Structure probing data (2A3) for a 177-nucleotide construct.
Reactivities are given for positions 27 through 126.
2A3 is a SHAPE reagent: it acylates the 2'-hydroxyl of flexible nucleotides of all four kinds.
It was measured as part of the RMDB library RFM100.
The 2A3 profile rests on 790 reads.

RNA sequence: GGGAACGACUCGAGUAGAGUCGAAAACGUGUACCUGAAGCGGACAUCUUGCCAAACGAAAUGCUGACCGAGAUACCCUGAAGUAGCUUGCUAAUAGUGGCGAUGUCCUCCUGAGACAUGUGCGGCGCGACGUCACUUCCUUCGGGAAGUGACGUCGAAAAGAAACAACAACAACAAC
Reactivity to 2A3 in 0.01 (KOAc 150mM, MgCl2 10mM, bicine 150mM(pH8.5), 24C), signal-to-noise 2, nucleotides 027 to 126: c030g000u000g010u030a080c000c000u030g030a060a000g030c020g010g050a010c000a040u010c070u130u230g070c030c000a100a200a090c070g060a110a000a010u150g010c000u000g040a020c040c060g020a000g000a020u100a100c000c040c040u090g050a150a000g000u060a000g060c000u030u140g000c060u070a030a140u040a270g140u030g110g000c030g020a020u090g030u060c000c020u000c000c030u130g020a120g030a020c000a040u100g020u040g040c030g000g050c010g000